Source: RMDB library OK2TRN, as collected in RNAgym. Structure probing data (DMS and 2A3) for a 177-nucleotide construct. For 2A3 the reverse transcriptase was SuperScript II with manganese.

RNA sequence: GGGAACGACUCGAGUAGAGUCGAAAAGGAGGCGUGGAGCGUGAUGACAUUGGCAUGGUGGCCGCUUCCCCCGUCGCGUCUCGGGUAAAUGGCAAGGUAGACGCUGACGUCGUCGGUCGAUUUGCCAGUUUUCCUAUUAAUUCGUUAAUAGGAAAACAAAAGAAACAACAACAACAAC
Reactivity to DMS in 0.01 (KOAc 150mM, MgCl2 10mM, bicine 150mM(pH8.5), 24C), signal-to-noise 9, nucleotides 027 to 126: g020g010a080g010g010c060g030u000g010g010a080g010c070g020u000g010a080u000g010a080c110a120u010u000g010g010c030a050u000g010g020u010g010g000c020c020g010c120u000u000c020c010c010c180c020g010u000c020g000c020g010u000c010u000c050g000g010g010u010a050a070a120u010g010g010c060a050a060g010g010u010a070g000a020c010g010c020u010g020a020c030g010u000c130g010u010c040g010g010u000c030g010a190u010u000u000g010c000c010a120
Reactivity to 2A3 in 0.01 (KOAc 150mM, MgCl2 10mM, bicine 150mM(pH8.5), 24C), signal-to-noise 9, nucleotides 027 to 126: g060g010a030g010g020c060g030u070g030g040a060g020c040g040u070g040a090u060g020a030c070a130u080u130g020g020c020a020u060g060g050u070g090g030c010c010g020c030u050u030c010c010c000c010c000g020u020c010g010c000g020u010c010u010c020g030g010g010u090a140a150a070u070g050g010c030a020a020g060g020u050a010g020a010c020g000c170u110g020a010c030g050u120c030g030u040c010g010g020u010c010g020a090u040u020u040g010c000c000a000

The 2A3 profile rests on 39,785 reads.